RNA sequence: GGGAACGACUCGAGUAGAGUCGAAAACUGUUUUACCAUAUGGUAUUUCAAAUGGUAGUCUUAAUAAUUCACCAAAACCACUUUCAACAAUAAUACCGUCAAGUAAUACAAUAACAACAGCGACGACGUUACGUGGUAUGUUCGCAUACCACGUAACAAAAGAAACAACAACAACAAC
Reactivity to 2A3 in 0.01 (KOAc 150mM, MgCl2 10mM, bicine 150mM(pH8.5), 24C), signal-to-noise 8, nucleotides 027 to 126: c040u020g030u030u060u010u020a020c030c020a060u030a070u300g010g020u020a070u030u100u080c120a110a130a100u050g040g000u030a090g050u020c080u150u110a140a120u150a140a110u170u100c070a090c040c010a040a070a090a100c030c010a080c060u100u240u130c090a140a120c030a050a150u110a200a020u030a080c000c020g010u050c050a050a050g020u020a030a040u050a090c050a060a090u160a230a050c080a050a010c010a030g070c020g090a030c060g010a040c060
Reactivity to DMS in 0.01 (KOAc 150mM, MgCl2 10mM, bicine 150mM(pH8.5), 24C), signal-to-noise 2, nucleotides 027 to 126: c010u010g000u010u000u020u000a050c020c080a060u000a070u000g000g000u000a030u060u010u010c090a100a050a110u010g000g000u000a020g010u060c080u000u030a140a050u010a150a100u000u000c050a190c050c030a120a110a140a030c140c100a050c050u010u030u010c190a090a080c090a010a070u010a020a100u000a030c030c000g000u000c160a040a080g000u010a090a000u000a020c140a000a070u020a110a110c260a010a040c120a050g050c050g000a110c050g040a080c140

Annotation
The record gives the reactivity of an RNA of 177 nucleotides to 2A3 and DMS. Reactivities are given for positions 27 through 126. The DMS profile rests on 1,952 reads. The reactions ran in a buffer of 150 mM KOAc, 10 mM MgCl2 and 150 mM bicine (pH 8.5), at 24 C. The 2A3 profile rests on 5,217 reads.